The data come from the RNA Mapping Database (RMDB), library RFMREP. An RNA of 177 nucleotides, treated with DMS and read out base by base. The DMS profile rests on 713 reads. The RNA was probed in 150 mM KOAc, 10 mM MgCl2 and 150 mM bicine (pH 8.5) at 24 C.

RNA sequence: GGGAACGACUCGAGUAGAGUCGAAAAUCGACGUUAAUGAAGCAAAUCCAUAAUUGCCAAUGAUGAGCAAUUCGCUAUUGCCGCCUAAAAACGGUUAGCCGGGGCUGCUAGAGCCUUGUUACCAAAGCCUAGGGAGAAGGUUCGCCUUCUCCCUAGGAAAAGAAACAACAACAACAAC
Reactivity to DMS in 0.01 (KOAc 150mM, MgCl2 10mM, bicine 150mM(pH8.5), 24C), signal-to-noise 1, nucleotides 027 to 126: u000c030g010a040c060g030u000u000a040a090u030g000a240a100g020c030a010a030a240u000c020c040a140u000a030a000u000u000g000c000c000a110a150u020g000a150u000g000a190g040c010a010a100u000u020c110g000c040u000a010u010u000g000c030c000g000c020c010u010a050a030a090a160a300c040g000g000u000u000a050g000c060c170g010g020g000g000c090u010g050c020u010a090g000a030g020c040c000u000u000g010u000u000a030c020c030a040a140a140g020